[RMDB]
RNA sequence: GGGAACGACUCGAGUAGAGUCGAAAACCUAGGCACCACAUCUCCGGGCGAUGUCGAAGCAAUGGCACAGUCCUAGGCAUCAUUCCUCCAUCCGAUGUCGAAGCAAUGGCGCAGUCCUAGGCAUCGGCCUCAUAUCGAAGUUCGCUUCGAUAUGAGGAAAAGAAACAACAACAACAAC
Reactivity to DMS in 0.01 (KOAc 150mM, MgCl2 10mM, bicine 150mM(pH8.5), 24C), signal-to-noise 2, nucleotides 027 to 126: c010c000u010a050g010g040c080a080c000c060a100c080a100u000c050u000c030c050g000g010g050c050g010a050u000g000u000c020g010a100a110g000c100a070a060u020g000g040c090a100c140a080g000u010c010c020u000a090g010g000c040a060u000c060a160u000u000c030c000u020c100c090a090u020c030c000g010a020u000g000u000c010g000a140a120g000c050a040a080u010g020g010c050g050c110a090g000u010c030c010u000a240g000g010c020a010u010c000g000g040
Reactivity to 2A3 in 0.01 (KOAc 150mM, MgCl2 10mM, bicine 150mM(pH8.5), 24C), signal-to-noise 2, nucleotides 027 to 126: c000c000u010a010g030g000c030a010c020c030a040c020a080u030c040u040c080c020g100g080g000c060g080a130u090g030u110c050g080a100a000g010c070a080a180u220g050g020c060a010c030a140g000u050c020c000u000a020g030g000c010a060u100c010a030u030u070c010c010u000c020c030a060u000c000c010g010a010u000g010u000c010g050a020a000g000c010a030a110u300g010g000c180g060c180a020g070u070c010c000u010a010g010g000c000a000u010c010g000g010

Structure probing data (DMS and 2A3) for a 177-nucleotide construct. For 2A3 the reverse transcriptase was SuperScript II with manganese. The RNA was probed in 150 mM KOAc, 10 mM MgCl2 and 150 mM bicine (pH 8.5) at 24 C. Values are in units of 0.01, from 0 to 300, in steps of 10.